[RMDB]
RNA sequence: GGGAACGACUCGAGUAGAGUCGAAAAUCGGACACCUGGGCGUACCGUUUACCUGUAUCGGGCAAAUGACCGCCGAUAUCGAAGGGCUUUGUUUUAUUCGUGACGGCGAACCUGUUACAUUAGACUGGUACUCACCCUUGUUCGCAAGGGUGAGUACAAAAGAAACAACAACAACAAC
Reactivity to DMS in 0.01 (KOAc 150mM, MgCl2 10mM, bicine 150mM(pH8.5), 24C), signal-to-noise 2, nucleotides 027 to 126: u000c020g020g010a080c060a060c160c040u000g040g040g050c100g010u010a040c050c010g000u000u000u010a110c120c060u000g000u000a050u000c070g030g020g050c090a030a050a080u020g000a080c220c010g000c000c000g030a030u010a070u000c060g010a040a030g010g010g000c040u000u010u020g010u000u030u000u000a170u010u010c030g010u000g010a180c030g000g010c020g010a050a140c020c000u000g010u020u000a040c040a050u010u000a040g000a080c070u010g000
Reactivity to 2A3 in 0.01 (KOAc 150mM, MgCl2 10mM, bicine 150mM(pH8.5), 24C), signal-to-noise 1, nucleotides 027 to 126: u130c020g000g030a030c000a010c030c060u080g040g060g000c050g010u020a070c000c000g000u010u010u050a070c000c000u020g000u000a020u040c030g000g000g000c090a080a120a160u200g090a080c040c060g000c030c000g040a030u050a020u220c000g040a000a000g040g020g050c000u190u150u200g100u120u110u000u080a300u040u030c010g010u020g010a010c010g000g000c000g020a020a020c000c000u030g010u010u030a030c010a020u030u070a030g060a090c070u090g010
Overview: The record gives the reactivity of an RNA of 177 nucleotides to DMS and 2A3. The data come from the RNA Mapping Database (RMDB), library OK2TRN. For 2A3 the reverse transcriptase was SuperScript II with manganese. The DMS profile rests on 1,675 reads.